[RMDB]
An RNA of 207 nucleotides, treated with DMS and 2A3 and read out base by base.
For 2A3 the reverse transcriptase was SuperScript II with manganese.
The RNA was probed in 150 mM KOAc, 10 mM MgCl2 and 150 mM bicine (pH 8.5) at 24 C.
High DMS reactivity at an A or C suggests that its Watson-Crick edge is free.
The 2A3 profile rests on 1,369 reads.
It was measured as part of the RMDB library OK3TST.
RNA sequence: GGGAACGACUCGAGUAGAGUCGAAAAGCAAUCCUCCCACUUCAGCCUUCCAAAGUGCUGGGAUGACAGGCAUGAGCCACUGUGCCCAGCCUGUAGUGCUUUUUGAUAUGUGAGAUUAGAUCCAGCAGGCCCAGAGUCCCAGUUGAGGAAUGUGGAACCAUGAACCAAGUUUCGACUUGGUUCAUGGAAAAGAAACAACAACAACAAC
Reactivity to DMS in 0.01 (KOAc 150mM, MgCl2 10mM, bicine 150mM(pH8.5), 24C), signal-to-noise 1, nucleotides 027 to 156: g010c090a050a150u000c080c060u000c030c000c010a130c020u000u000c070a080g040c010c010u020u040c010c020a120a080a110g030u000g040c010u000g030g010g030a080u000g000a060c060a060g020g010c030a100u000g000a100g050c020c050a170c140u030g010u000g020c000c010c000a080g060c020c010u000g000u000a060g040u020g010c020u100u000u000u000u000g010a140u020a090u000g040u040g010a170g000a190u000u000a140g000a160u000c020c050a150g010c030a090g000g000c000c030c040a130g020a180g020u000c020c010c000a080g000u000u000g000a230g020g030a020a080u000g020u010g000g000a090a220
Reactivity to 2A3 in 0.01 (KOAc 150mM, MgCl2 10mM, bicine 150mM(pH8.5), 24C), signal-to-noise 2, nucleotides 027 to 156: g010c020a010a130u060c020c040u010c000c020c000a050c050u070u050c020a040g020c000c000u000u010c030c000a080a130a020g120u100g070c000u000g000g010g010a030u040g060a010c000a020g000g010c190a290u060g040a020g010c030c030a260c240u210g170u300g020c000c000c000a010g010c000c010u000g000u010a040g020u010g040c000u120u070u050u070u060g120a120u150a150u140g160u130g030a090g010a090u030u270a160g050a140u040c030c000a040g030c010a030g000g010c000c060c000a040g020a010g060u000c000c000c000a000g000u060u070g050a040g000g020a060a010u060g020u040g000g040a020a070